[RMDB]
RNA sequence: GGGAACGACUCGAGUAGAGUCGAAAAAUAUUAUCUCUAGAUGUAUCAAUAGAAGUCAAAAUUAGAGAUCGCGAUAUGAACGGGCUUGUACGUUCCUACGCUAAAAUAAUACAAGAUAAUUUUUAGUUCACACUUCUUUCUGUAGAACUAAAAAUAUAGCUAAUUCACAGUUCGCUGUGAAUUAGCUAAAAGAAACAACAACAACAAC
Reactivity to 2A3 in 0.01 (KOAc 150mM, MgCl2 10mM, bicine 150mM(pH8.5), 24C), signal-to-noise 1, nucleotides 027 to 156: a000u160a050u210u030a050u020c030u030c050u080a000g010a110u040g050u090a130u090c010a010a070u050a070g040a060a000g000u060c020a070a070a160a160u100u010a040g030a010g000a050u050c080g000c000g050a100u000a000u050g000a000a000c010g000g060g000c000u000u010g000u000a010c000g000u000u000c000c000u000a010c000g000c000u050a050a060a060a120u210a110a050u130a070c000a000a000g000a030u080a100a010u130u000u000u000u000a000g010u020u000c010a040c010a000c120u140u110c070u060u300u070c100u140g000u010a050g010a000a000c000u010a000a000a000a000a000u100a050u050